[RMDB]
RNA sequence: GGGAACGACUCGAGUAGAGUCGAAAAGACUGCUCAAAAUGGGCGCCAUUGAAUGUUGGGCUGUGGAGGAAAAUUAACUUAUGCCUCGGUUUGAACGAAAAUGGUUAAACUUUAGGAGCAAACUGAAUCUUUCCCUAGACUUCGGUCUAGGGAAAGAAAAAGAAACAACAACAACAAC
Reactivity to DMS in 0.01 (KOAc 150mM, MgCl2 10mM, bicine 150mM(pH8.5), 24C), signal-to-noise 2, nucleotides 027 to 126: g000a060c080u000g000c000u000c010a000a010a030a030u000g000g000g000c300g020c000c000a000u010u000g000a100a240u030g000u000u000g000g000g000c040u000g000u000g000g000a050g000g000a050a070a070a080u000u080a140a200c300u020u000a100u120g000c000c000u000c010g000g000u000u000u000g000a000a000c000g020a040a100a040a000u000g000g000u000u030a050a210a230c050u000u000u020a060g000g000a000g000c000a040a060a130c070u000g040a120a180
Reactivity to 2A3 in 0.01 (KOAc 150mM, MgCl2 10mM, bicine 150mM(pH8.5), 24C), signal-to-noise 2, nucleotides 027 to 126: g060a000c080u070g000c000u000c010a130a140a010a100u180g000g000g000c020g010c030c020a000u000u040g120a200a020u160g000u020u000g000g020g000c000u020g110u160g170g060a000g020g120a140a020a020a020u050u030a170a050c050u050u040a030u220g040c000c000u000c000g000g110u070u060u000g220a000a000c000g040a010a110a120a010u060g000g020u080u090a080a010a020c000u050u080u100a170g000g020a010g000c000a020a000a050c060u090g060a090a030